[RMDB]
RNA sequence: GGGAACGACUCGAGUAGAGUCGAAAACACUAGAGGGCACUAUUUCUCUCUGUUAUCCAAGUUUUGAUGCACCGGGAAUUGAAUUAGGAACAAAUCACCAAAAAGGGGGAAAUACUCAUUUGUGAAGUGCUAAAGAAGUAAUAUUUUUCACAAAAACGCUAUAGCGGUAGUUCGCUACCGCUAUAGCAAAAGAAACAACAACAACAAC
Reactivity to 2A3 in 0.01 (KOAc 150mM, MgCl2 10mM, bicine 150mM(pH8.5), 24C), signal-to-noise 1, nucleotides 027 to 156: c050a010c010u050a070g020a150g030g000g000c050a010c110u120a110u110u040u000c000u000c000u000c000u000g020u010u080a070u030c050c040a070a060g020u030u030u210u180g040a050u050g010c000a010c040c000g160g000g000a060a070u000u060g000a010a040u070u020a070g000g060a000a000c000a050a020a010u260c110a040c070c060a110a010a000a000a000g000g000g000g000g000a020a020a000u050a070c010u000c050a070u000u070u000g000u000g010a020a020g050u000g170c000u010a060a090a050g180a010a010g050u050a120a080u110a170u240u090u040u080u150c150a010c050a060a050a180a030a000c300